This 207-nucleotide RNA was probed chemically with DMS and 2A3. The reactions ran in a buffer of 150 mM KOAc, 10 mM MgCl2 and 150 mM bicine (pH 8.5), at 24 C. The 2A3 profile rests on 3,767 reads.
RNA sequence: GGGAACGACUCGAGUAGAGUCGAAAACAUCCAACAGCGACUGGGAUCGUCAUCUCGGCUUGUUCGCGUGACCGAGAGAUCCGAGCAGAGACACAGCGAACUGCACACGGAGAAGCCCUGAAGACGCGGCGGAGGACCCGGGUUCGAUUCCCGGCAGGUAAUGAAUCUAGUUCGCUAGAUUCAUUACAAAAGAAACAACAACAACAAC
Reactivity to DMS in 0.01 (KOAc 150mM, MgCl2 10mM, bicine 150mM(pH8.5), 24C), signal-to-noise 2, nucleotides 027 to 156: c050a130u010c000c000a110a140c070a100g020c030g030a140c030u000g020g060g000a050u000c070g010u000c120a110u010c010u010c010g020g000c000u010u010g030u000u000c080g010c070g010u000g030a100c010c030g000a080g040a140g010a080u000c030c010g040a170g050c020a110g030a120g000a220c060a130c080a120g000c000g080a080a150c040u000g010c020a130c080a180c040g000g000a180g010a110a140g030c000c020c040u000g010a080a080g010a120c030g010c020g010g000c090g030g010a200g000g000a080c040c000c000g000g000g050u000u000c050g000a300u000u020c000c000c000g020g010c000a050g000
Reactivity to 2A3 in 0.01 (KOAc 150mM, MgCl2 10mM, bicine 150mM(pH8.5), 24C), signal-to-noise 3, nucleotides 027 to 156: c010a060u030c020c010a050a040c020a100g050c020g070a040c050u080g010g020g030a040u040c040g050u030c040a130u030c020u000c010g020g000c010u060u160g060u120u080c040g010c030g070u020g030a090c010c010g000a010g000a000g000a020u020c010c010g020a030g000c050a000g060a020g030a030c020a020c050a150g060c050g070a070a020c020u030g000c050a110c030a020c040g040g000a060g010a100a020g030c000c000c000u060g080a080a010g080a020c020g000c010g030g010c020g010g050a050g040g020a020c000c010c010g000g000g000u030u070c020g000a070u070u020c010c000c000g010g010c030a040g110